Chemical mapping of a 177-nucleotide RNA with 2A3 and DMS.
The RNA was probed in 150 mM KOAc, 10 mM MgCl2 and 150 mM bicine (pH 8.5) at 24 C.
For DMS the reverse transcriptase was MarathonRT.
2A3 adducts were read by reverse transcription with SuperScript II with manganese.
RNA sequence: GGGAACGACUCGAGUAGAGUCGAAAAGAUAUGGAUACUGGUACAGAGUAAGCUCGGAAACGAGCUCACGACGAAGUACCUGGUAUCCUAAGUCAAAGCUUGCAGAUAGUUCGCUAUCUGCAAGCAAGUGUUCAUCCAUGUUCGCAUGGAUGAACACAAAAGAAACAACAACAACAAC
Reactivity to 2A3 in 0.01 (KOAc 150mM, MgCl2 10mM, bicine 150mM(pH8.5), 24C), signal-to-noise 1, nucleotides 027 to 126: g000a010u090a010u150g000g000a000u020a080c010u030g030g030u000a000c040a060g130a010g020u010a060a020g010c010u000c040g000g010a030a030a020c000g000a000g000c000u000c010a060c030g300a080c080g090a270a070g010u000a000c000c010u010g000g050u000a000u000c000c000u000a040a030g040u030c030a050a100a100g010c010u000u000g000c000a020g000a030u010a000g050u050u090c280g040c220u000a000u040c020u000g000c030a000a000g000c000a010a000
Reactivity to DMS in 0.01 (KOAc 150mM, MgCl2 10mM, bicine 150mM(pH8.5), 24C), signal-to-noise 1, nucleotides 027 to 126: g010a010u000a300u000g000g000a010u020a000c000u000g010g000u000a020c000a130g000a180g000u000a020a000g010c010u000c000g010g000a050a020a080c000g000a000g010c000u000c060a010c020g000a160c220g010a140a080g020u000a000c000c000u040g020g010u000a000u000c000c000u000a000a060g020u000c020a100a210a170g000c000u000u000g000c000a000g000a020u000a030g000u000u030c210g020c010u010a010u010c000u000g010c000a000a000g000c000a040a020